Source: RMDB library OK2TRN, as collected in RNAgym. Chemical mapping of a 177-nucleotide RNA with DMS and 2A3. For DMS the reverse transcriptase was MarathonRT. The DMS profile rests on 170,039 reads. Reactivities are rounded to 0.1 and cut off at 0 and 3. For 2A3, 159,430 sequencing reads were counted.
RNA sequence: GGGAACGACUCGAGUAGAGUCGAAAAGCUGGUUCGGUCACUCGACGGCGCUGCUGGAAAUCGACGGCUACCGGGUGCUUACCGAUCCGGUGUGGAGCGAUCGGUGCUCACCGUCCGACGUCGUCGGACGUCAAGAAGGAUUCGUCCUUCUUGACGUAAAAGAAACAACAACAACAAC
Reactivity to DMS in 0.01 (KOAc 150mM, MgCl2 10mM, bicine 150mM(pH8.5), 24C), signal-to-noise 9, nucleotides 027 to 126: g010c030u000g010g010u000u000c030g010g010u000c080a070c090u010c040g010a090c080g010g010c150g010c050u000g010c040u000g010g000a060a090a120u010c030g010a040c010g010g000c020u000a110c110c020g000g000g010u000g000c260u000u000a040c020c020g000a020u000c020c020g010g010u000g020u010g010g000a090g010c090g010a090u000c070g010g010u010g000c040u000c020a080c030c020g000u010c020c020g010a160c140g010u000c100g010u000c010g000g000
Reactivity to 2A3 in 0.01 (KOAc 150mM, MgCl2 10mM, bicine 150mM(pH8.5), 24C), signal-to-noise 9, nucleotides 027 to 126: g020c020u060g060g020u080u060c020g020g020u050c020a030c070u060c040g060a040c040g030g030c070g020c070u090g000c020u080g060g120a090a110a090u170c030g020a030c010g030g000c010u030a060c060c000g010g000g000u010g000c040u070u070a020c000c010g010a010u000c010c020g030g020u150g060u130g120g090a080g030c090g030a060u080c040g030g050u090g010c010u010c010a050c010c010g080u050c030c090g020a040c030g080u110c040g000u000c010g010g010